[RMDB]
RNA sequence: GGGAACGACUCGAGUAGAGUCGAAAAGCGGCGAUGCAGAGACGGUGGGCCAGCGUCUCUGGACUGGCCCUUAGAGCGAAGGCAGGUCCUGCUUACGCUUGCCUUUUGGCUUUUAGCCGCGAAAGAAGGGAUUGUGCAUGUUCGCAUGCGCAAUCCCAAAAGAAACAACAACAACAAC
Reactivity to 2A3 in 0.01 (KOAc 150mM, MgCl2 10mM, bicine 150mM(pH8.5), 24C), signal-to-noise 1, nucleotides 027 to 126: g000c010g000g000c010g000a000u090g000c020a010g050a010g000a040c010g010g030u040g000g000g060c060c000a010g040c030g120u000c090u000c010u060g000g010a040c000u000g010g000c000c000c000u020u070a030g000a000g000c010g000a000a020g130g010c010a000g010g080u040c000c020u040g060c010u090u000a050c010g030c000u000u010g000c000c010u120u040u070u050g140g000c000u080u010u030u120a060g010c020c020g000c000g070a100a140a050g160a000a060
Reactivity to DMS in 0.01 (KOAc 150mM, MgCl2 10mM, bicine 150mM(pH8.5), 24C), signal-to-noise 1, nucleotides 027 to 126: g000c010g000g000c000g010a130u000g030c000a070g000a090g000a040c020g000g000u000g000g030g020c010c010a030g000c090g010u050c090u000c160u040g000g000a130c080u040g040g000c000c000c000u000u020a010g020a000g000c000g000a050a030g000g000c010a030g000g020u020c170c060u000g010c050u020u010a200c030g000c000u000u000g000c020c000u000u000u000u000g010g000c000u000u000u000u040a180g000c000c000g000c000g040a020a060a090g030a130a130